[RMDB]
RNA sequence: GGGAACGACUCGAGUAGAGUCGAAAAGAUAUGGACUCUCUUGUUGUCAGCUUUAAGGGAGAGGUCGUCGGAAACGACGACUACCCACCUCCCGAAGAGCUUGGAUUUACAAGAGAGUCCUAAGUCACACAUACCAUCUCUUCGGAGAUGGUAUGUGAAAAGAAACAACAACAACAAC
Reactivity to DMS in 0.01 (KOAc 150mM, MgCl2 10mM, bicine 150mM(pH8.5), 24C), signal-to-noise 1, nucleotides 027 to 126: g010a040u000a300u000g020g030a000c000u000c000u000c000u000u010g000u000u000g000u000c040a070g000c000u030u000u000a100a300g000g000g010a010g000a190g050g000u000c000g030u000c000g000g000a100a170a150c000g030a000c000g000a020c000u010a030c030c030c210a300c050c030u000c000c000c000g000a210a030g000a000g030c010u010u020g060g000a030u000u000u000a040c020a000a000g000a030g010a030g020u000c000c000u000a000a020g010u000c010a270